[RMDB]
RNA sequence: GGGAACGACUCGAGUAGAGUCGAAAAGGGGGUGUGGACGGAAACAUGAUAUUCCAGAAUGUCAAACACAUGUCUAUAAGCCUGCUGGACAUGGCUCUGGGUGAUAAGGAGGAUGUCAAGGAUGUGACUAUUUGUGGCCUUUCGAGGCCACAAAUAGAAAAGAAACAACAACAACAAC
Reactivity to DMS in 0.01 (KOAc 150mM, MgCl2 10mM, bicine 150mM(pH8.5), 24C), signal-to-noise 1, nucleotides 027 to 126: g020g010g000g010g020u000g030u020g000g000a100c100g000g000a060a080a130c070a120u000g020a120u000a050u010u020c060c040a100g000a060a080u000g000u000c040a030a070a170c240a160c040a110u010g000u000c030u000a060u000a120a090g010c010c060u010g000c090u000g000g000a020c030a020u010g000g010c130u000c030u000g010g020g040u010g010a050u000a070a090g000g000a160g020g000a060u000g000u000c050a050a100g010g000a150u000g000u010g010a160
Description
The data come from the RNA Mapping Database (RMDB), library OK2TRN. Structure probing data (DMS) for a 177-nucleotide construct. Conditions: 150 mM KOAc, 10 mM MgCl2 and 150 mM bicine (pH 8.5), 24 C. For DMS, 961 sequencing reads were counted.